[RMDB]
RNA sequence: GGGAACGACUCGAGUAGAGUCGAAAAUGCAUUGUUCGCAAUGCAAAAAAAGCGUACUACGAAGCAAUGACGGAUGAACUACGAACUGGUCCCAAAUAGGACCACUUCGCAUCUAAGACAGCUUCGUAUCGCAAAAAAGGUGGAUUCGUCCACCUAAUCUCUAUGUUAUCUUCGGAUAACAUAGAGAAAAAGAAACAACAACAACAAC
Reactivity to 2A3 in 0.01 (KOAc 150mM, MgCl2 10mM, bicine 150mM(pH8.5), 24C), signal-to-noise 5, nucleotides 027 to 156: u070g010c000a000u000u020g010u070u080c190g050c140a020a030u050g020c080a020a040a040a010a000a050a000g040c050g030u100a070c040u000a000c030g010a010a000g010c050a080a290u090g030a040c060g000g000a000u020g020a100a110c100u100a050c300g000a000a000c010u010g010g000u020c030c020c030a140a270a090u300a100g000g010a000c000c000a000c010u000u000c000g000c000a000u000c000u020a050a080g100a110c020a060g240c020u000u000c010g000u000a010u040c010g000c000a000a050a060a050a030a030g000g000u020g010g010a010u050u100c170g060u060c060c000a000c000c010u010a010a060
Reactivity to DMS in 0.01 (KOAc 150mM, MgCl2 10mM, bicine 150mM(pH8.5), 24C), signal-to-noise 3, nucleotides 027 to 156: u000g000c000a010u010u000g000u000u010c300g030c030a030a020u000g030c000a030a000a030a140a060a110a160g010c010g000u000a080c140u010a030c000g000a050a020g000c050a100a140u020g010a160c170g030g000a200u000g010a090a150c060u000a040c020g020a040a030c030u000g010g010u000c000c010c010a060a110a170u000a040g000g000a040c000c000a010c000u000u000c000g000c000a070u000c090u000a070a180g000a130c070a100g000c020u000u000c000g010u000a010u000c040g050c030a010a040a080a060a090a040g000g020u010g010g000a090u000u010c250g030u000c010c000a010c010c000u000a000a030
Overview
Chemical mapping of a 207-nucleotide RNA with 2A3 and DMS. Values cover nucleotides 27 to 156. For DMS, 7,056 sequencing reads were counted. The reactions ran in a buffer of 150 mM KOAc, 10 mM MgCl2 and 150 mM bicine (pH 8.5), at 24 C. For 2A3, 7,096 sequencing reads were counted. DMS (dimethyl sulfate) methylates the pairing face of unpaired adenines and cytosines.